[RMDB]
RNA sequence: GGGAACGACUCGAGUAGAGUCGAAAAGCCCAGUUGGGAGGGCGUGGUGGACAAAUGCAGCCGGGGAAGAUAUCAGCCACUCCUGCUGCUGUACGCCGUUCCCCAGCAGCCUACGGUGGGCAACGGCCCGAGUUAACCUAUUCGUAGGUUAACUCGGAAAAGAAACAACAACAACAAC
Reactivity to DMS in 0.01 (KOAc 150mM, MgCl2 10mM, bicine 150mM(pH8.5), 24C), signal-to-noise 7, nucleotides 027 to 126: g010c010c000c000a110g020u000u000g010g000g000a090g010g000g010c050g010u000g020g010u000g000g010a180c120a060a120a070u000g010c020a020g000c010c090g010g010g010g000a080a100g000a090u000a090u010c160a110g000c080c100a170c020u000c020c020u000g010c010u000g010c010u000g000u000a040c110g010c040c020g000u000u000c090c010c000c020a040g010c030a110g000c040c040u010a090c130g000g010u010g000g000g010c060a080a060c130g000g000c080
Reactivity to 2A3 in 0.01 (KOAc 150mM, MgCl2 10mM, bicine 150mM(pH8.5), 24C), signal-to-noise 6, nucleotides 027 to 126: g010c000c010c000a010g060u100u050g060g030g040a190g030g010g060c070g040u060g020g110u080g040g030a040c040a050a180a060u200g000c010a000g000c000c050g000g000g020g000a160a060g030a080u170a070u220c080a040g110c040c010a050c020u010c000c000u010g000c010u000g000c000u020g030u050a030c050g010c010c010g010u020u010c000c000c000c000a010g040c010a010g000c000c020u140a130c150g160g060u110g040g010g000c010a010a020c030g080g010c000

The record gives the reactivity of an RNA of 177 nucleotides to DMS and 2A3. For DMS, 11,522 sequencing reads were counted. Reactivities are given for positions 27 through 126. For 2A3, 10,994 sequencing reads were counted. For DMS the reverse transcriptase was MarathonRT. The reactions ran in a buffer of 150 mM KOAc, 10 mM MgCl2 and 150 mM bicine (pH 8.5), at 24 C.